RNA sequence: GGGAACGACUCGAGUAGAGUCGAAAAAACGCUGGGACAACUCCCCACCAACCGCCCUACCACUACCCACCUUACUGAAGCGCGCACGGUAAGAGGUGGUAGUAACAAGUUGAGGUUGUCCUGUGCUGAAGCGCGCACGGCAACCGAAAGGUGCGAACGUAUCAGUUUUCUUCGGAAAACUGAUACGAAAAGAAACAACAACAACAAC
Reactivity to 2A3 in 0.01 (KOAc 150mM, MgCl2 10mM, bicine 150mM(pH8.5), 24C), signal-to-noise 1, nucleotides 027 to 156: a000a000c030g010c040u050g000g000g000a000c000a020a000c060u180c100c070c050c020a080c030c000a040a020c030c050g150c040c030c000u000a000c000c010a000c020u070a130c070c040c020a030c020c000u010u000a000c000u030g060a210a110g000c020g000c000g010c040a000c000g020g010u000a000a000g010a010g000g000u000g050g000u000a000g000u030a040a120c190a120a060g020u060u040g020a020g050g050u000u000g020u000c010c030u060g010u000g040c000u070g020a160a050g010c000g000c010g010c040a010c000g000g000c000a000a000c010c000g030a070a050a040g020g020u130g000c140g030a080a040